[RMDB]
RNA sequence: GGGAACGACUCGAGUAGAGUCGAAAACAGAGUGCAGCACCGUAACGCCGGACUGGCGAUCAUCCCGGCCGGGUCCAUCGCGGUGGUGGCCUGGCUGAUCGCCGCCGCCGCGCUGGUCGUGCUAGCGCUCAGCGCAUAAUUUCGAUUAUGCGCUGAGAAAAGAAACAACAACAACAAC
Reactivity to DMS in 0.01 (KOAc 150mM, MgCl2 10mM, bicine 150mM(pH8.5), 24C), signal-to-noise 8, nucleotides 027 to 126: c100a130g000a040g010u000g010c000a050g010c000a020c010c070g010u010a100a100c160g020c010c010g010g000a120c040u000g010g010c140g010a090u010c140a110u000c090c000c010g000g000c010c010g000g000g000u010c010c000a010u000c010g010c050g010g010u000g010g020u000g010g010c010c080u000g010g010c090u010g000a050u010c160g010c000c000g010c010c010g010c020c020g000c020g000c040u000g000g010u000c060g010u000g010c000u010a070g020c010g000
Reactivity to 2A3 in 0.01 (KOAc 150mM, MgCl2 10mM, bicine 150mM(pH8.5), 24C), signal-to-noise 4, nucleotides 027 to 126: c040a020g060a020g070u130g020c010a010g010c010a010c010c050g110u170a190a050c100g000c010c000g050g080a280c030u060g000g020c040g020a040u100c020a090u080c020c010c000g000g000c000c000g030g000g020u000c010c000a010u010c010g000c040g030g030u020g000g010u030g000g000c020c030u080g130g000c070u050g040a080u090c020g000c000c000g000c000c010g000c010c000g000c000g000c010u010g020g000u030c010g000u010g010c010u010a040g010c010g000